[RMDB]
RNA sequence: GGGAACGACUCGAGUAGAGUCGAAAAAGAAAGAGCGUAUUCGCGUCUUGACCUGAAUGAGCCUAGACUGUAGGCUCUAGUGGGAUAGUAACGCUCACUCCCAAAACGCUAUUCCACAGUCAGUUAAGAAUAUUGUCGCUUUCGAGCGACAAUAUUCAAAAGAAACAACAACAACAAC
Reactivity to DMS in 0.01 (KOAc 150mM, MgCl2 10mM, bicine 150mM(pH8.5), 24C), signal-to-noise 1, nucleotides 027 to 126: a010g060a120a080a050g000a010g020c010g000u010a270u000u000c140g000c120g020u000c030u000u000g030a080c060c030u010g000a100a080u010g000a010g030c000c030u010a120g030a160c220u030g050u000a010g000g000c000u000c030u000a010g030u000g010g000g000a000u000a010g000u000a080a050c030g000c010u000c000a070c170u000c000c000c020a010a050a120a070c160g000c000u000a010u000u000c000c000a000c000a110g000u010c050a000g000u000u000a150a130
Reactivity to 2A3 in 0.01 (KOAc 150mM, MgCl2 10mM, bicine 150mM(pH8.5), 24C), signal-to-noise 2, nucleotides 027 to 126: a010g190a030a110a010g010a010g000c020g040u050a100u070u190c070g020c070g280u070c050u020u030g100a100c030c010u090g090a130a080u070g000a010g020c020c000u080a130g080a300c130u250g180u300a000g000g000c020u020c000u000a000g000u020g000g000g000a010u020a030g020u000a090a000c000g010c020u000c020a020c060u050c000c010c040a010a000a030a000c070g000c000u010a000u030u020c000c000a030c000a040g080u040c000a010g020u050u080a090a050
An RNA of 177 nucleotides, treated with DMS and 2A3 and read out base by base. High 2A3 reactivity points to a flexible backbone, as in loops and unpaired stretches. Values are in units of 0.01, from 0 to 300, in steps of 10. For 2A3, 992 sequencing reads were counted. The data come from the RNA Mapping Database (RMDB), library M2PK90. Conditions: 150 mM KOAc, 10 mM MgCl2 and 150 mM bicine (pH 8.5), 24 C.